[RMDB]
The record gives the reactivity of an RNA of 177 nucleotides to DMS. The reactions ran in a buffer of 150 mM KOAc, 10 mM MgCl2 and 150 mM bicine (pH 8.5), at 24 C.
RNA sequence: GGGAACGACUCGAGUAGAGUCGAAAAGAUAUGGAAAUUGUCUAUGACAGGCCUCCGAGCAACAGCUCGCUGUCGGAAACGACAGUCGAGACAUGCUCGAGGCCUGUCAUAGACAAUUUCCUAAGUCCAUUUACAGAGCGUUCGCGCUCUGUAAAUGAAAAGAAACAACAACAACAAC
Reactivity to DMS in 0.01 (KOAc 150mM, MgCl2 10mM, bicine 150mM(pH8.5), 24C), signal-to-noise 1, nucleotides 027 to 126: g000a090u020a300u000g030g000a050a000a010u000u000g010u000c000u000a010u000g000a020c010a000g000g000c000c000u020c140c090g050a050g020c020a030a110c300a220g010c000u000c000g010c000u000g000u000c000g010g000a130a140a220c010g000a010c020a010g000u020c040g010a020g000a060c060a140u000g000c000u000c000g000a010g010g020c020c000u000g000u000c010a000u000a000g000a010c010a000a000u000u010u000c000c000u000a010a060g010u010c020